An RNA of 177 nucleotides, treated with 2A3 and DMS and read out base by base.
The 2A3 profile rests on 2,088 reads.
The RNA was probed in 150 mM KOAc, 10 mM MgCl2 and 150 mM bicine (pH 8.5) at 24 C.
[RMDB]
RNA sequence: GGGAACGACUCGAGUAGAGUCGAAAAGCUGCCUUAAGGAAAUGUGCGAUCAUCCUUAUGUCGACACAGAAAAGACAAUGCCGACUUUACGGCGCGUAGAGACCAACAAGCUAAUAUAUGACCCUGAGGUUAGUGUAUUCUUCGGAAUACACUAACCAAAAGAAACAACAACAACAAC
Reactivity to 2A3 in 0.01 (KOAc 150mM, MgCl2 10mM, bicine 150mM(pH8.5), 24C), signal-to-noise 2, nucleotides 027 to 126: g000c010u000g000c000c030u060u070a050a050g020g080a060a130a100u070g060u050g060c100g020a060u170c030a080u120c050c030u070u110a060u190g010u000c030g060a040c010a010c000a050g180a050a120a010a010g090a010c050a030a060u080g010c010c000g060a110c070u070u070u180a080c020g030g000c000g000c000g010u020a030g020a010g030a100c040c000a000a100c010a070a020g000c000u070a140a010u120a080u050a030u130g100a100c000c010c020u010g030a020
Reactivity to DMS in 0.01 (KOAc 150mM, MgCl2 10mM, bicine 150mM(pH8.5), 24C), signal-to-noise 3, nucleotides 027 to 126: g010c060u010g010c030c030u000u010a090a060g030g000a060a050a120u000g020u010g000c100g020a070u000c060a180u000c080c090u010u000a040u010g020u010c040g000a130c060a070c070a100g000a110a050a090a100g000a080c160a050a100u020g010c020c000g000a130c150u010u020u000a090c080g000g010c030g020c100g000u000a070g010a130g000a060c050c050a040a040c120a070a040g010c020u000a080a090u010a100u010a040u010g000a100c020c000c010u000g000a200